[RMDB]
RNA sequence: GGGAACGACUCGAGUAGAGUCGAAAAAAGUCCAUAUGCCCACCUUCGCUGUGUCGGGUGGAUGCUUAUACAUGCUAUGGAUGCCUACAUUUGAAAUAAUGUAGAUGCCUAAUACUCUCUCUCAGGGAGAGAGUUUAGAUGCCUCCAAAGAUAAUGCCCAGUGGAUGAUGUUCGCAUCAUCCACUGGAAAAGAAACAACAACAACAAC
Reactivity to 2A3 in 0.01 (KOAc 150mM, MgCl2 10mM, bicine 150mM(pH8.5), 24C), signal-to-noise 1, nucleotides 027 to 156: a000a000g090u040c020c000a000u020a020u100g020c040c000c000a000c000c000u180u230c110g090c140u220g020u060g080u300c020g000g070g020u030g000g020a020u110g020c010u150u110a090u070a220c040a040u140g010c010u040a030u070g000g030a020u030g020c000c000u010a000c000a000u000u000u150g090a080a080a010u070a020a000u070g000u000a020g020a070u080g050c010c000u000a010a000u130a160c000u000c000u040c000u020c010u030c290a150g000g230g000a000g010a000g000a000g020u000u000u000a010g000a010u010g000c020c010u050c020c000a020a020a020g040a070u090a090a020u110g080c000